[RMDB]
RNA sequence: GGGAACGACUCGAGUAGAGUCGAAAAUACGAAAUGGUGAAUACAAUGGUGCUACUAAUUCAGUCUUCGUUGAUGAACUAUGUUCGAAGUCUUCUCAUUUUACAUGCACAAUGGAUUCGAAUGAAGGGGUAGUACCAUCGUUCGCGAUGGUACUACCAAAAGAAACAACAACAACAAC
Reactivity to DMS in 0.01 (KOAc 150mM, MgCl2 10mM, bicine 150mM(pH8.5), 24C), signal-to-noise 2, nucleotides 027 to 126: u010a080c090g010a050a130a110u000g020g040u020g000a080a010u000a090c100a040a070u010g010g000u000g000c050u010a050c060u000a100a050u010u000c020a030g010u000c090u000u000c160g010u000u000g020a140u010g010a100a040c050u000a070u000g010u000u000c050g010a030a010g000u010c040u000u010c040u010c000a100u000u000u000u010a090c120a060u000g000c090a030c090a020a070u010g000g010a120u000u000c060g000a080a060u000g000a030a130g010g010
Reactivity to 2A3 in 0.01 (KOAc 150mM, MgCl2 10mM, bicine 150mM(pH8.5), 24C), signal-to-noise 2, nucleotides 027 to 126: u160a000c010g050a000a000a020u170g060g020u110g000a030a010u110a080c040a000a070u120g060g010u030g060c040u060a040c020u050a040a110u080u090c050a070g150u000c020u020u060c040g080u110u080g060a100u050g000a040a050c020u020a040u190g100u000u000c010g010a060a000g010u020c000u050u020c010u020c030a010u040u000u110u090a100c080a040u050g020c020a020c000a100a040u060g010g010a020u050u050c060g020a100a130u120g050a110a050g100g060